[RMDB]
RNA sequence: GGGAACGACUCGAGUAGAGUCGAAAAGUGUUUGCUGACGUUUCCAUUCCCUUGUUUCAAUCAUUGGUUAAUCCCUUGAUUCCUUUGGGGAUUUUUGGGUUAAACUGAUUUUUGGGGCCCUUUGUUUUAUUACACAUUUAUUCGUAAAUGUGUAAUAAAAAGAAACAACAACAACAAC
Reactivity to 2A3 in 0.01 (KOAc 150mM, MgCl2 10mM, bicine 150mM(pH8.5), 24C), signal-to-noise 5, nucleotides 027 to 126: g060u040g060u080u110u110g050c090u080g050a060c040g010u020u040u000c010c010a030u020u010c020c000c000u010u040g020u010u040u020c010a020a010u010c010a010u010u020g010g000u010u030a050a080u150c010c000c000u000u010g000a010u020u030c010c010u150u130u260g110g020g000g040a050u020u020u010u020u010g000g000g000u020u040a090a080a020c000u000g000a010u000u000u010u030u040g020g000g040g010c000c000c020u120u150u090g030u010u070u020
Reactivity to DMS in 0.01 (KOAc 150mM, MgCl2 10mM, bicine 150mM(pH8.5), 24C), signal-to-noise 2, nucleotides 027 to 126: g010u010g020u010u020u010g020c030u010g030a080c090g020u000u010u020c020c030a200u010u000c010c000c010u020u010g010u000u000u010c030a020a040u000c040a010u010u000g000g000u000u000a040a090u000c000c000c010u000u020g000a020u000u000c020c010u000u030u050g030g030g010g010a000u000u000u020u010u010g000g010g000u000u010a040a060a010c010u010g020a010u000u000u010u000u000g020g010g000g020c020c280c070u020u030u020g010u000u010u000